[RMDB]
RNA sequence: GGGAACGACUCGAGUAGAGUCGAAAACAGCACUCCGCGUAGGAGUAUACUGGACUACACGCUCUGGUGCCAAGACGUAUGGUGACAUCGUUAUAAAAUCUUUUGCCUAGACUCGUUCUAGAGCAGAUCGAUAAGCGUAAUUCGUUACGCUUAUCGAAAAAGAAACAACAACAACAAC
Reactivity to 2A3 in 0.01 (KOAc 150mM, MgCl2 10mM, bicine 150mM(pH8.5), 24C), signal-to-noise 9, nucleotides 027 to 126: c020a000g020c030a010c010u010c000c010g030c140g160u260a060g000g030a000g000u000a000u060a010c020u040g010g030a020c020u060a030c090a010c070g010c010u010c020u030g050g000u050g000c010c020a040a030g100a080c060g100u170a070u090g040g000u040g030a020c010a050u190c060g050u080u050a130u100a090a100a040a070u050c050u020u090u070u060g000c000c000u000a010g000a010c010u030c260g170u300u000c030u000a000g000a030g000c000a000g020a040
Reactivity to DMS in 0.01 (KOAc 150mM, MgCl2 10mM, bicine 150mM(pH8.5), 24C), signal-to-noise 6, nucleotides 027 to 126: c030a060g010c220a030c000u010c030c030g000c260g010u020a140g010g000a020g010u000a040u010a080c030u000g000g000a070c050u010a070c130a060c070g010c030u010c050u000g000g010u000g000c050c040a080a090g000a070c110g010u020a040u000g000g010u000g000a100c040a020u010c040g000u000u010a120u020a060a070a100a070u010c080u000u000u000u000g000c000c000u000a020g010a020c020u020c280g000u030u000c020u010a010g000a130g020c000a030g010a070